[RMDB]
An RNA of 177 nucleotides, treated with DMS and 2A3 and read out base by base. The RNA was probed in 150 mM KOAc, 10 mM MgCl2 and 150 mM bicine (pH 8.5) at 24 C. The data come from the RNA Mapping Database (RMDB), library RFM100. The DMS profile rests on 2,219 reads.
RNA sequence: GGGAACGACUCGAGUAGAGUCGAAAAGUUGCAUAAUAAAACAAAGGAGGAAUGGACGAUGAAUAAUUAUAUGAAGACUUCAAACAAGGCAUUAUUGCGCUUAAAAAUAGAAUUUAUUUCACCGGACACAUGAAUCCCUUUUCGAAGGGAUUCAUGUAAAAGAAACAACAACAACAAC
Reactivity to DMS in 0.01 (KOAc 150mM, MgCl2 10mM, bicine 150mM(pH8.5), 24C), signal-to-noise 2, nucleotides 027 to 126: g030u000u010g010c080a060u030a130a080u070a090a120a150a050c080a040a090a100g010g000a080g000g000a090a080u010g010g030a070c020g020a100u000g030a050a050u000a040a040u030u020a060u000a100u000g000a110a070g020a130c150u000u020c140a020a080a090c160a010a030g010g000c000a030u010u030a050u060u020g020c050g000c000u020u020a000a030a050a080a100u050a020g000a060a020u000u020u020a020u010u000u010c010a020c040c000g000g000a110c110
Reactivity to 2A3 in 0.01 (KOAc 150mM, MgCl2 10mM, bicine 150mM(pH8.5), 24C), signal-to-noise 2, nucleotides 027 to 126: g060u120u180g050c020a050u080a220a010u040a040a260a030a090c080a020a010a030g060g050a020g000g080a060a020u050g020g030a040c050g040a060u010g070a020a000u020a020a050u140u050a050u090a040u240g110a080a000g020a040c000u090u070c130a060a080a050c030a130a010g000g000c020a000u000u030a080u140u120g070c040g090c020u160u120a000a260a000a000a000u110a030g060a000a000u140u140u040a130u060u100u000c030a000c030c000g070g000a010c010